[RMDB]
RNA sequence: GGGAACGACUCGAGUAGAGUCGAAAACACAUUUGCAUCUCACUAAGAGUGCUCAACAACAUGCAGUUUGACCAAAAGCACAUGGUUCUGAAGUAUUGGUUUUCCUUCUUGAAACUAUAGCUUACUUACAAGAAGAUAGUCAAACCUGAUAUGUGGAUCGCUAAUUACCUUUCGAGGUAAUUAGCGAAAAAGAAACAACAACAACAAC
Reactivity to DMS in 0.01 (KOAc 150mM, MgCl2 10mM, bicine 150mM(pH8.5), 24C), signal-to-noise 3, nucleotides 027 to 156: c060a060c040a130u000u000u000g030c100a210u010c030u000c030a080c060u010a100a150g000a190g060u000g020c030u010c060a110a150c050a050a120c030a060u000g000c050a040g010u000u000u010g010a100c010c040a020a040a110a040g010c020a050c060a040u000g030g010u000u000c030u000g030a080a080g000u000a090u010u010g030g020u000u000u000u000c110c010u000u000c000u000u000g010a110a050a050c000u000a050u000a120g010c070u000u000a060c080u000u000a130c050a040a070g010a070a120g000a140u000a080g010u010c020a020a020a030c040c040u000g010a060u000a060u000g020u000g000g000a120
Reactivity to 2A3 in 0.01 (KOAc 150mM, MgCl2 10mM, bicine 150mM(pH8.5), 24C), signal-to-noise 7, nucleotides 027 to 156: c080a010c020a080u100u100u140g020c040a110u120c080u010c030a080c160u210a250a050g010a000g020u040g010c030u060c060a070a240c030a050a020c000a030u090g000c000a000g000u000u040u030g030a020c020c030a060a100a010a060g020c010a090c030a130u040g020g000u030u020c020u030g020a020a000g010u060a070u130u160g090g100u130u080u080u080c030c000u000u020c010u050u090g090a130a040a020c010u030a020u020a090g030c010u020u050a060c020u090u110a070c070a050a040g120a060a010g050a160u130a050g030u020c010a010a010a030c020c070u060g040a110u040a020u120g040u040g040g060a050